The record gives the reactivity of an RNA of 177 nucleotides to 2A3.
Reactivities are given for positions 27 through 126.
The reactions ran in a buffer of 150 mM KOAc, 10 mM MgCl2 and 150 mM bicine (pH 8.5), at 24 C.
RNA sequence: GGGAACGACUCGAGUAGAGUCGAAAAAUCAGAUUCUAUAUAGGUAGAGUUAGUGUCUAUUAUAGUUACUCCAUUUACCAUAUGAGAUUCAUUUAUUCUUCGUCUCAUAAUUUCUUCUGCCUUUGAUCCCUAUCCUGCAGUUCGCUGCAGGAUAGGGAAAAGAAACAACAACAACAAC
Reactivity to 2A3 in 0.01 (KOAc 150mM, MgCl2 10mM, bicine 150mM(pH8.5), 24C), signal-to-noise 3, nucleotides 027 to 126: a000u150c080a050g020a100u010u020c010u120a080u000a000u000a080g010g000u030a010g000a040g010u100u110a030g040u070g040u030c080u050a190u180u080a100u290a080g060u050u070a010c000u070c010c020a030u070u070u060a080c020c010a000u020a070u090g090a050g020a050u070u100c010a090u050u190u130a100u070u180c050u140u160c080g070u000c010u000c020a020u010a250a080u060u060u030c040u100u000c020u040g020c000c000u110u050u050g020a050u040